[RMDB]
The record gives the reactivity of an RNA of 207 nucleotides to DMS and 2A3. For 2A3, 1,043 sequencing reads were counted. Reactivities are given for positions 27 through 156. The reactions ran in a buffer of 150 mM KOAc, 10 mM MgCl2 and 150 mM bicine (pH 8.5), at 24 C. The DMS profile rests on 3,337 reads. DMS adducts were read by reverse transcription with MarathonRT.
RNA sequence: GGGAACGACUCGAGUAGAGUCGAAAAUUCGGCUGGUGGUGGAUGGCGUUCCACAGCUUCGUGAACGAGCGGGUUUUCUGCUGCCAGCUCCGCACUGCCGCGAUGACGAGCAGCACGGCGCUGAUGCCGGUGAGCGUCCAGAUGAUUGGCGCUUGCGAAACACCUAUGGGUUCGCCCAUAGGUGUUUAAAAGAAACAACAACAACAAC
Reactivity to DMS in 0.01 (KOAc 150mM, MgCl2 10mM, bicine 150mM(pH8.5), 24C), signal-to-noise 1, nucleotides 027 to 156: u000u000c000g000g030c040u000g030g040u000g010g040u000g030g010a060u000g000g000c050g050u000u000c010c040a130c000a100g000c090u000u000c000g050u010g020a070a110c060g020a080g000c020g000g000g030u000u000u010u000c020u000g000c030u000g000c040c010a050g000c000u000c000c000g090c010a040c020u000g020c010c010g020c040g010a140u040g010a110c050g010a140g020c010a050g010c030a060c020g030g010c050g040c070u020g000a070u010g000c040c040g060g000u000g020a040g010c010g010u000c000c040a120g020a250u000g000a250u000u000g010g020c020g050c010u000u000g010c050g000
Reactivity to 2A3 in 0.01 (KOAc 150mM, MgCl2 10mM, bicine 150mM(pH8.5), 24C), signal-to-noise 2, nucleotides 027 to 156: u030u040c050g010g000c000u000g000g030u030g030g050u020g010g000a050u010g050g050c000g020u000u010c070c000a030c000a070g110c060u200u240c120g040u040g100a180a060c030g010a010g040c040g000g040g080u140u030u140u000c000u000g010c000u000g000c000c000a000g000c010u000c000c000g010c000a000c010u000g020c000c000g020c060g210a200u170g060a120c010g050a090g110c010a030g010c030a010c010g020g000c030g020c160u220g070a170u300g000c010c010g060g000u000g000a000g020c000g030u010c070c000a060g070a300u200g040a140u130u110g050g000c010g000c000u000u000g000c010g040